[RMDB]
RNA sequence: GGGAACGACUCGAGUAGAGUCGAAAAACAAUUACAUCAGCUACUGAGCGGCCAGCAGAGCACGGAGAGAGGACACUCACCCGACACAAUCCUCCUGCAGAUCCCGCACAUAGGGAAGCGUAACGAUCGUUCGGUAAAGAAGUCGUUGAGAGAGGGCGGAUCUGACUAGAUUCGUCUAGUCAGAUCCAAAAGAAACAACAACAACAAC
Reactivity to 2A3 in 0.01 (KOAc 150mM, MgCl2 10mM, bicine 150mM(pH8.5), 24C), signal-to-noise 1, nucleotides 027 to 156: a000c100a100a150u260u080a070c070a140u100c030a050g040c020u070a030c010u130g050a020g010c000g000g000c020c040a020g040c010a000g050a000g060c020a020c020g020g000a020g010a010g000a000g040g030a030c020a020c070u040c010a050c000c010c000g070a030c010a020c010a090a080u040c000c020u000c020c000u000g000c000a020g030a270u060c060c000c020g130c040a030c030a130u140a020g030g010g010a000a030g030c000g030u060a000a040c020g030a000u040c030g000u050u010c040g010g090u140a100a060a050g010a000a020g040u040c020g000u060u090g000a040g010a030g020a030g020g010g010c010
The record gives the reactivity of an RNA of 207 nucleotides to 2A3. The 2A3 profile rests on 605 reads. The reactions ran in a buffer of 150 mM KOAc, 10 mM MgCl2 and 150 mM bicine (pH 8.5), at 24 C. For 2A3 the reverse transcriptase was SuperScript II with manganese. The data come from the RNA Mapping Database (RMDB), library OK3TST.